[RMDB]
RNA sequence: GGGAACGACUCGAGUAGAGUCGAAAAGUAAAACCCACAUACUAUACUACAUUGCACUGUGUACUAGUAUGGAUAGGGCACUAAUCUUUACUCUAUUUAGUGCAAAACUAUAAUUUCUCGUACAACAGGAUUUACGCAUCUUCGGAUGCGUAAAUCCAAAAGAAACAACAACAACAAC
Reactivity to 2A3 in 0.01 (KOAc 150mM, MgCl2 10mM, bicine 150mM(pH8.5), 24C), signal-to-noise 2, nucleotides 027 to 126: g080u110a000a120a010a000c000c000c000a010c050a000u020a000c000u050a000u000a000c060u040a000c000a080u050u180g210c230a120c300u030g070u000g000u000a020c050u000a000g000u000a020u000g000g020a000u070a070g030g000g000c020a000c000u000a040a040u050c040u080u170u060a210c010u000c020u020a210u230u120u000a000g000u000g040c020a000a260a000a000c040u040a020u100a150a060u060u150u060c020u000c010g070u100a120c000a120a000c000a100

Source: RMDB library RFM100, as collected in RNAgym. Structure probing data (2A3) for a 177-nucleotide construct. Reactivities are given for positions 27 through 126. The 2A3 profile rests on 511 reads.